The record gives the reactivity of an RNA of 177 nucleotides to 2A3.
The RNA was probed in 150 mM KOAc, 10 mM MgCl2 and 150 mM bicine (pH 8.5) at 24 C.

RNA sequence: GGGAACGACUCGAGUAGAGUCGAAAAGACACACUUGGCAGAUGACCUCCUCGUUGGUGUGUGUCGGUAAUGUUGUCAGUCACAGGCAACAGUUAACGAUCUGCAUAAAUAAAAAGAGAAGAACAAACGACGCUCGCAUAUUCGUAUGCGAGCGUCGAAAAGAAACAACAACAACAAC
Reactivity to 2A3 in 0.01 (KOAc 150mM, MgCl2 10mM, bicine 150mM(pH8.5), 24C), signal-to-noise 1, nucleotides 027 to 126: g000a000c000a010c000a020c000u120u160g000g000c000a000g010a060u040g000a050c000c000u000c000c000u140c020g050u120u300g000g000u000g000u000g000u000g000u000c020g000g000u180a170a030u000g000u000u000g000u000c090a080g150u120c050a120c030a050g000g000c000a000a000c000a020g000u000u000a000a070c260g130a000u040c000u000g000c000a000u030a000a050a000u130a000a100a000a050a000g190a100g060a300a000g120a060a000c060a100a190a090